Annotation: The record gives the reactivity of an RNA of 177 nucleotides to 2A3 and DMS. DMS adducts were read by reverse transcription with MarathonRT. The RNA was probed in 150 mM KOAc, 10 mM MgCl2 and 150 mM bicine (pH 8.5) at 24 C.

[RMDB]
RNA sequence: GGGAACGACUCGAGUAGAGUCGAAAAUUGAGACAGGUGUAACCCAGCUGAAACAGGGUUUUCACCCUUCCUUUCUUCUGGUUUCCAUCCUCUCGCCGGAAGGUCAAAAGAUACGGUUCGCCGUAUCCCAUAAAAGUUCGUUCGCGAACUUUUAUGGAAAAGAAACAACAACAACAAC
Reactivity to 2A3 in 0.01 (KOAc 150mM, MgCl2 10mM, bicine 150mM(pH8.5), 24C), signal-to-noise 3, nucleotides 027 to 126: u080u090g010a030g020a030c090a090g030g000u010g000u010a010a010c000c010c010a010g010c050u040g020a020a020a080c300a180g040g000g000u080u000u160u200c110a050c010c000c000u020u020c000c000u010u050u030c000u010u000c000u000g000g040u010u010u020c020c010a030u050c000c020u000c000u000c020g020c000c010g030g100a090a020g040g020u090c050a040a020a060a060g000a010u000a010c010g020g020u020u060c120g020c050c000g000u000a010u000c020
Reactivity to DMS in 0.01 (KOAc 150mM, MgCl2 10mM, bicine 150mM(pH8.5), 24C), signal-to-noise 3, nucleotides 027 to 126: u000u000g000a020g020a050c300a140g010g010u010g010u010a030a030c040c000c010a040g010c090u000g000a010a040a040c210a010g010g000g010u000u010u010u000c200a050c000c000c000u000u010c040c030u010u000u020c000u010u000c010u000g010g000u000u000u010c090c010a020u010c010c120u000c020u000c040g010c040c030g030g020a080a050g000g000u020c140a060a040a070a130g000a010u000a000c010g000g010u000u000c220g020c010c000g020u000a000u000c000